[RMDB]
RNA sequence: GGGAACGACUCGAGUAGAGUCGAAAAAUAAACCGGAAGCCACGCAGCAAGCCCGACCGGAAGGGCAACCGGAAUGCGUAUCUCAACUCGCCCGAGACGCACCUGAGAGACGGGAAUGCGUAAAAAACUAGGAACAUUGGUUCGCCAAUGUUCCUAGAAAAGAAACAACAACAACAAC
Reactivity to DMS in 0.01 (KOAc 150mM, MgCl2 10mM, bicine 150mM(pH8.5), 24C), signal-to-noise 1, nucleotides 027 to 126: a130u000a000a110a130c030c060g000g010a200a150g010c030c030a110c110g010c030a010g010c060a130a150g000c010c000c000g020a160c020c000g020g000a050a140g000g010g000c110a040a140c030c000g000g000a030a040u000g000c030g060u010a060u000c050u030c070a030a140c110u030c050g000c070c020c040g000a110g000a080c080g000c010a060c050c000u010g000a190g020a150g000a070c040g030g000g000a100a100u000g000c020g000u030a010a020a040a070a000a050
Chemical mapping of a 177-nucleotide RNA with DMS. The reactions ran in a buffer of 150 mM KOAc, 10 mM MgCl2 and 150 mM bicine (pH 8.5), at 24 C. Values are in units of 0.01, from 0 to 300, in steps of 10. Reactivities are given for positions 27 through 126.